[RMDB]
RNA sequence: GGGAACGACUCGAGUAGAGUCGAAAACUAACUUCUAUUUGUAAAUUGUAACUAUUUUUUUUAGUUUUGAUUCGAUCACAAUUGAAACGAAACAUUAGAAUCAAAUCAAUUCCAACUGGAAGAAAAAUCAAUAUGGCAACUUCGGUUGCCAUAUUGAAAAAGAAACAACAACAACAAC
Reactivity to 2A3 in 0.01 (KOAc 150mM, MgCl2 10mM, bicine 150mM(pH8.5), 24C), signal-to-noise 2, nucleotides 027 to 126: c020u020a030a030c000u030u020c000u000a030u010u010u050g010u020a050a090a060u000u010g000u030a030a030c020u000a140u050u000u000u010u000u000u110u300a060g000u030u010u000u040g010a020u000u000c060g080a120u100c110a030c060a190a080u070u200g020a090a050a040c060g060a060a020a040c040a040u040u010a080g030a040a020u040c040a040a050a000u070c000a030a000u020u000c040c010a030a020c020u000g030g020a010a000g060a030a140a030a000a010